Background: The record gives the reactivity of an RNA of 177 nucleotides to 2A3.
[RMDB]
RNA sequence: GGGAACGACUCGAGUAGAGUCGAAAACUCGAUCACUUACGAGUGAUCGAGAAACGUGACGAAAAGUCACGAAAACGUCGGAGAGAAAGGCACCAUGGACUCAACCGACAAAAACCAAAGGUGCGAAAGUGAUGGUCAGCUUCGGCUGACCAUCACUAAAAGAAACAACAACAACAAC
Reactivity to 2A3 in 0.01 (KOAc 150mM, MgCl2 10mM, bicine 150mM(pH8.5), 24C), signal-to-noise 1, nucleotides 027 to 126: c000u000c000g000a020u000c000a040c020u020u090a000c170g170a040g060u040g040a000u000c030g000a000g020a030a000a000c000g000u000g000a000c000g030a050a300a000a160g000u000c000a000c020g000a050a080a000a000c060g000u020c010g030g020a040g000a000g030a080a040a000g090g000c010a000c000c000a080u160g080g000a150c030u000c100a130a060c040c000g050a050c090a060a120a000a020a000c150c010a140a080a040g000g000u000g010c000g000a070a040